[RMDB]
RNA sequence: GGGAACGACUCGAGUAGAGUCGAAAAGCUCAUCCUCGAUUGCGAGCGGCGGUCCUGAGAACUCUUAUCUUCCUGCUUAGAAGAGGAGUCUCCUGGACGCCCCGCCCGGUCGGGAUGGGCCGCAGUUAUAGUUCUUACUUCGGUAAGAACAAAAGAAACAACAACAACAAC
Reactivity to 2A3 in 0.01 (KOAc 150mM, MgCl2 10mM, bicine 150mM(pH8.5), 24C), signal-to-noise 9, nucleotides 027 to 129: g000c000u000c010a010u000c010c030u210c070g010a010u000u080g090c180g060a210g070c010g020g000c060g040g050u010c000c000u060g010a070g010a150a060c000u010c010u060u120a090u100c000u010u030c030c050u110g210c100u250u280a030g000a010a000g010a010g010g000a000g000u010c020u000c020c050u020g000g010a010c020g250c040c010c000c000g010c000c010c010g010g010u000c000g010g000g000a010u000g000g000g000c000c010g010c010a000g000u080u120a180u110a140
Reactivity to DMS in 0.01 (KOAc 150mM, MgCl2 10mM, bicine 150mM(pH8.5), 24C), signal-to-noise 7, nucleotides 027 to 129: g000c010u010c000a050u040c020c030u090c020g000a000u000u040g020c150g040a060g000c050g010g010c300g000g050u020c000c000u040g000a110g000a100a040c010u000c020u030u070a100u030c000u020u040c030c170u040g040c240u100u100a120g000a030a050g040a000g040g000a000g000u010c050u000c020c110u000g010g010a050c020g060c030c100c000c020g000c030c060c030g000g030u000c000g000g000g000a030u000g010g020g020c020c000g030c100a040g000u030u040a120u050a120